An RNA of 177 nucleotides, treated with DMS and 2A3 and read out base by base. The reactions ran in a buffer of 150 mM KOAc, 10 mM MgCl2 and 150 mM bicine (pH 8.5), at 24 C. Values cover nucleotides 27 to 126. High DMS reactivity at an A or C suggests that its Watson-Crick edge is free.
[RMDB]
RNA sequence: GGGAACGACUCGAGUAGAGUCGAAAAUGUGAAAAAUCCACUCUUCCUAUUGGAUGAGAUCGAUAAAAUGGCAUCGGAUAUGCGCGGAGAUCCUGCUUCUGCGUUACUGGAGGUGCUGGAUCCAGAACCUACCCGAUUAUUUCGAUAAUCGGGUAGGAAAAGAAACAACAACAACAAC
Reactivity to DMS in 0.01 (KOAc 150mM, MgCl2 10mM, bicine 150mM(pH8.5), 24C), signal-to-noise 3, nucleotides 027 to 126: u010g040u010g000a020a130a100a120a070u010c030c050a130c020u000c040u000u000c010c000u000a180u000u010g000g000a030u000g010a070g000a070u010c110g010a110u010a050a050a090a080u000g010g010c040a040u000c050g010g000a120u010a060u000g000c030g030c010g010g010a050g010a070u000c050c080u020g010c070u010u010c020u010g010c020g020u000u000a080c130u000g000g000a090g010g000u000g000c040u000g010g010a070u000c030c030a080g000a140a150
Reactivity to 2A3 in 0.01 (KOAc 150mM, MgCl2 10mM, bicine 150mM(pH8.5), 24C), signal-to-noise 2, nucleotides 027 to 126: u130g020u060g080a120a120a030a030a010u020c020c010a010c020u000c010u050u000c010c010u120a290u140u300g020g020a020u020g030a050g020a090u090c020g050a040u070a170a210a020a090u230g010g000c000a010u020c020g000g080a070u050a030u180g000c000g000c000g030g010a050g030a040u060c040c030u050g050c000u040u030c010u070g000c010g030u050u070a060c050u110g020g020a040g030g000u040g000c000u020g040g010a040u000c020c010a030g030a050a030